[RMDB]
RNA sequence: GGGAACGACUCGAGUAGAGUCGAAAAUUACCGCCCAGGAUGGGGUGCAGCGUUCCUGCAAUAUCCAGGGCACCUAGGUGCAGCCUUGUAGUUUUAGUGGACUUUAGGCUAAAGAAUUCCACUAGCAAAAAUCUUUAAGGGUUCGCCCUUAAAGAAAGGAUUAUCGUAUCUUCGGAUACGAUAAUCCAAAAGAAACAACAACAACAAC
Reactivity to 2A3 in 0.01 (KOAc 150mM, MgCl2 10mM, bicine 150mM(pH8.5), 24C), signal-to-noise 1, nucleotides 027 to 156: u090u020a110c000c000g000c000c000c000a000g070g040a010u070g040g010g040g130u050g000c010a000g000c030g090u150u130c010c000u040g030c000a010a050u010a010u100c000c000a000g030g000g000c010a010c000c020u040a040g060g050u090g050c040a030g160c060c010u070u040g100u130a110g060u080u130u140u000a010g000u020g020g000a000c000u000u140u050a040g000g080c020u120a060a040a040g040a000a080u120u000c000c040a040c010u010a000g010c010a050a140a120a100a170u000c000u000u000u000a000a000g050g000g000u030u070c120g050c000c000c000u010u000a000a000a000g010a050a000a000

Source: RMDB library M2RFPK, as collected in RNAgym. An RNA of 207 nucleotides, treated with 2A3 and read out base by base. For 2A3 the reverse transcriptase was SuperScript II with manganese. The reactions ran in a buffer of 150 mM KOAc, 10 mM MgCl2 and 150 mM bicine (pH 8.5), at 24 C. Reactivities are rounded to 0.1 and cut off at 0 and 3.